The record gives the reactivity of an RNA of 177 nucleotides to DMS and 2A3. The RNA was probed in 150 mM KOAc, 10 mM MgCl2 and 150 mM bicine (pH 8.5) at 24 C. DMS adducts were read by reverse transcription with MarathonRT. As a SHAPE reagent, 2A3 marks flexible, mostly unpaired nucleotides at the ribose 2'-OH. Source: RMDB library OK2TRN, as collected in RNAgym.
[RMDB]
RNA sequence: GGGAACGACUCGAGUAGAGUCGAAAAGGCCGGCUGGAAGCCGAACUCGGCGUGCGUCUGCUGCACCGCACCACCCGCAGCGUCAGCCUGACCCCGGACGGCCAGCUGUUCUACGAGCGCUGCGCAACCAGUAGGGUAUGUUCGCAUACCCUACUGGAAAAGAAACAACAACAACAAC
Reactivity to DMS in 0.01 (KOAc 150mM, MgCl2 10mM, bicine 150mM(pH8.5), 24C), signal-to-noise 3, nucleotides 027 to 126: g000g030c030c030g040g000c010u000g000g000a120a130g010c010c010g010a140a120c270u020c050g020g000c070g010u010g020c050g000u000c060u000g000c060u000g010c050a120c140c030g010c040a050c040c050a100c050c050c020g010c060a040g010c020g000u000c050a080g010c050c060u000g000a100c040c020c010c050g010g000a090c150g010g000c020c020a050g000c020u000g000u000u010c060u000a100c140g000a100g020c010g020c010u000g010c050g020c090a100a140
Reactivity to 2A3 in 0.01 (KOAc 150mM, MgCl2 10mM, bicine 150mM(pH8.5), 24C), signal-to-noise 2, nucleotides 027 to 126: g020g020c040c030g020g060c060u060g100g110a130a070g000c000c020g020a190a160c130u090c170g040g000c030g020u020g030c040g030u040c070u120g030c020u060g020c020a040c040c040g000c020a040c020c030a100c010c030c040g000c020a000g000c000g040u060c030a000g000c000c060u080g060a100c000c000c010c020g080g020a060c040g010g020c000c000a020g010c040u100g110u170u000c050u100a080c050g050a020g040c010g020c030u030g010c000g020c020a000a110